[RMDB]
RNA sequence: GGGAACGACUCGAGUAGAGUCGAAAAUCGAGGAUCUGUCGGAAAGGGACAACGCCGAGAUCAACUCCAACAUCUCUUUCUCCUUCUUGGCCACAUACAGCCAAGCGGCUGCCGUUAUCGGCACGGAGGGUGUAGAGGUGUUCGCACCUCUACACCCAAAAGAAACAACAACAACAAC
Reactivity to 2A3 in 0.01 (KOAc 150mM, MgCl2 10mM, bicine 150mM(pH8.5), 24C), signal-to-noise 1, nucleotides 027 to 126: u030c020g000a030g040g000a030u000c030u050g100u060c070g050g120a120a090a100g180g010g010a050c010a140a060c070g000c020c030g010a020g000a070u000c010a010a160c000u000c060c010a040a060c010a080u030c050u000c000u010u120u000c080u060c020c020u060u090c000u030u000g000g040c000c060a070c000a180u280a030c080a070g050c000c000a000a000g040c000g100g000c040u050g060c000c030g100u200u090a180u290c000g020g060c000a000c070g060g000a090
Reactivity to DMS in 0.01 (KOAc 150mM, MgCl2 10mM, bicine 150mM(pH8.5), 24C), signal-to-noise 1, nucleotides 027 to 126: u000c060g000a130g020g050a070u000c010u000g050u000c000g000g010a070a220a080g020g020g010a070c010a140a070c130g010c080c020g030a120g000a070u010c020a160a200c060u000c010c050a020a080c070a000u000c050u020c030u000u000u000c030u000c070c010u000u000c050u000u000g000g000c000c020a080c220a010u020a120c300a120g000c010c000a080a100g010c300g020g000c190u000g000c100c030g000u000u010a080u000c060g010g040c050a010c190g000g000a090
This 177-nucleotide RNA was probed chemically with 2A3 and DMS. 2A3 adducts were read by reverse transcription with SuperScript II with manganese. The data come from the RNA Mapping Database (RMDB), library OK2TST. The reactions ran in a buffer of 150 mM KOAc, 10 mM MgCl2 and 150 mM bicine (pH 8.5), at 24 C. 2A3 is a SHAPE reagent: it acylates the 2'-hydroxyl of flexible nucleotides of all four kinds. For DMS the reverse transcriptase was MarathonRT. The DMS profile rests on 455 reads.